[RMDB]
RNA sequence: GGGAACGACUCGAGUAGAGUCGAAAACAUCGCGACUUCGGUCGCGAUGAAAGUUGUGCUCCGUCACGCAUAACAAAUCCCAAUGAGGGUAGGUGACUGCAAAACGACACGCCUUCGGGCGUGUCAAGGAGAUCGUAAGAUUCGUCUUACGAUCUCCAAAAGAAACAACAACAACAAC
Reactivity to 2A3 in 0.01 (KOAc 150mM, MgCl2 10mM, bicine 150mM(pH8.5), 24C), signal-to-noise 2, nucleotides 027 to 126: c000a000u010c000g010c000g010a000c010u030u080c300g100g010u010c000g000c010g000a000u000g000a000a000a000g010u010u010g020u010g030c040u080c130c050g130u070c040a020c070g000c000a030u040a070a010c010a000a060a030u010c020c010c020a000a120u290g050a110g100g150g030u200a040g010g080u010g020a010c020u030g020c050a060a050a050a080c090g020a000c010a000c010g000c020c010u030u080c230g050g030g000c000g030u010g000u020c010a000a010
Reactivity to DMS in 0.01 (KOAc 150mM, MgCl2 10mM, bicine 150mM(pH8.5), 24C), signal-to-noise 2, nucleotides 027 to 126: c010a000u020c000g030c000g000a000c000u010u010c210g070g020u000c000g010c000g030a000u000g000a020a080a120g000u000u000g030u000g000c000u020c110c210g010u000c090a070c140g030c020a010u000a040a010c020a070a070a120u000c000c000c020a120a030u000g000a100g000g040g020u000a050g010g010u000g000a090c040u010g010c300a100a060a110a110c200g010a000c000a000c000g000c000c000u010u020c160g030g010g020c020g020u000g000u000c000a040a050
An RNA of 177 nucleotides, treated with 2A3 and DMS and read out base by base.
Values cover nucleotides 27 to 126.
It was measured as part of the RMDB library M2PK50.
Conditions: 150 mM KOAc, 10 mM MgCl2 and 150 mM bicine (pH 8.5), 24 C.
For 2A3, 2,457 sequencing reads were counted.
2A3 adducts were read by reverse transcription with SuperScript II with manganese.